Structure probing data (2A3 and DMS) for a 177-nucleotide construct.
RNA sequence: GGGAACGACUCGAGUAGAGUCGAAAAGGGAGGGGUUCUGGAGCCUCUGGUUGCAAGAAAGGUAUCAGAACAAGUCCAGAUUCCAGAGAGCAGAAGAGGGGACCAAGAAACCAGCCUGUCCCCAAGCCCGUGAAUAUAUUUUCGAAUAUAUUCACGGAAAAGAAACAACAACAACAAC
Reactivity to 2A3 in 0.01 (KOAc 150mM, MgCl2 10mM, bicine 150mM(pH8.5), 24C), signal-to-noise 3, nucleotides 027 to 126: g020g000g000a020g000g020g020g010u030u000c020u010g050g030a060g070c030c000u000c000u030g120g040u120u050g020c050a100a060g050a200a090a010g050g000u050a020u060c010a020g070a160a080c100a200a030g030u030c030c040a060g020a030u060u010c010c000a020g040a010g000a020g110c040a010g040a150a000g020a100g010g000g000g060a030c010c010a020a080g020a040a030a000c000c000a000g030c000c010u020g040u070c000c000c000c000a010a040g010c000
Reactivity to DMS in 0.01 (KOAc 150mM, MgCl2 10mM, bicine 150mM(pH8.5), 24C), signal-to-noise 5, nucleotides 027 to 126: g020g010g020a040g010g000g020g010u000u000c010u000g000g030a300g000c030c040u000c010u000g020g010u010u000g020c050a100a110g000a060a190a060g000g010u000a070u000c020a100g010a070a130c130a060a150g010u000c050c060a110g010a090u000u000c000c000a060g010a180g010a130g000c030a060g010a140a060g010a100g010g010g010g010a120c030c040a040a090g000a030a040a050c030c010a030g010c030c030u000g000u020c010c000c000c180a090a100g000c230
The 2A3 profile rests on 4,442 reads. It was measured as part of the RMDB library OK2TRN.